[RMDB]
RNA sequence: GGGAACGACUCGAGUAGAGUCGAAAAGUCCAGGGUGUGCCGUGUCCUAUUCCACCUGCGCUGGCCUGAUAUUGUAGGGGACAAUGGACGUCAGUGCGUCAGCAGGUGGCGUGCCCUUCGCGGUGGAUCUUUAUACGUGUUUCGGCACGUAUGAGGGAAAAGAAACAACAACAACAAC
Reactivity to 2A3 in 0.01 (KOAc 150mM, MgCl2 10mM, bicine 150mM(pH8.5), 24C), signal-to-noise 9, nucleotides 027 to 126: g040u010c010c000a010g020g010g010u120g020u050g020c000c010g010u020g030u030c010c010u030a050u070u010c000c000a010c000c000u010g000c030g000c010u030g020g000c000c010u060g010a010u020a020u050u030g020u020a050g000g030g010g000a010c000a010a030u040g030g040a010c010g000u010c000a000g000u020g100c040g010u010c010a020g000c000a000g000g010u000g000g000c000g010u040g020c000c000c000u020u050c040g000c030g000g020u030g040g040a050
Reactivity to DMS in 0.01 (KOAc 150mM, MgCl2 10mM, bicine 150mM(pH8.5), 24C), signal-to-noise 9, nucleotides 027 to 126: g010u010c010c010a100g010g000g020u010g010u010g010c020c020g010u010g000u010c020c020u010a110u030u020c000c010a020c010c000u010g010c020g010c010u020g000g000c010c010u010g000a120u030a060u010u010g010u010a110g010g010g010g010a300c060a060a060u010g010g010a130c180g000u000c010a020g010u030g010c050g000u000c090a260g000c020a020g000g010u000g000g000c150g000u010g000c020c010c010u000u010c030g010c030g000g010u000g010g000a060
Chemical mapping of a 177-nucleotide RNA with 2A3 and DMS. The DMS profile rests on 263,130 reads. 2A3 adducts were read by reverse transcription with SuperScript II with manganese.